[RMDB]
RNA sequence: GGGAACGACUCGAGUAGAGUCGAAAAUACGUGACGAUGUGGUCAGGAAGCUUGGGAAGUGGCCGACACUGAUAGAUUUAGCAACUGCUUGCUAUUAUCUCACAAUGUUUUUCCCAGAAACACGAAAAGUCCAAUUGAUAUUCGUAUCAAUUGGACUAAAAGAAACAACAACAACAAC
Reactivity to 2A3 in 0.01 (KOAc 150mM, MgCl2 10mM, bicine 150mM(pH8.5), 24C), signal-to-noise 2, nucleotides 027 to 126: u100a000c050g010u030g020a040c080g010a080u070g020u030g060g070u040c010a020g010g090a090a020g030c070u120u110g070g040g030a080a080g050u060g050g060c050c060g020a000c010a000c040u000g010a020u040a100g050a010u000u000u110a010g010c010a050a090c090u180g110c070u170u030g000c000u020a010u100u070a040u060c020u000c020a030c000a040a060u070g020u020u070u000u060u030c030c010c000a030g110a020a090a010c100a000c090g130a030a150a100
Reactivity to DMS in 0.01 (KOAc 150mM, MgCl2 10mM, bicine 150mM(pH8.5), 24C), signal-to-noise 8, nucleotides 027 to 126: u000a060c150g020u010g010a130c080g020a070u010g020u000g000g000u010c020a060g020g000a120a130g010c040u010u010g020g010g020a110a070g030u000g000g010c060c050g000a080c050a040c040u000g010a110u010a040g010a060u000u000u000a030g020c010a050a090c270u010g010c300u000u010g000c000u000a010u000u000a040u000c010u000c120a100c060a040a080u010g010u000u000u000u000u000c010c000c010a180g000a090a050a070c120a080c170g020a090a080a080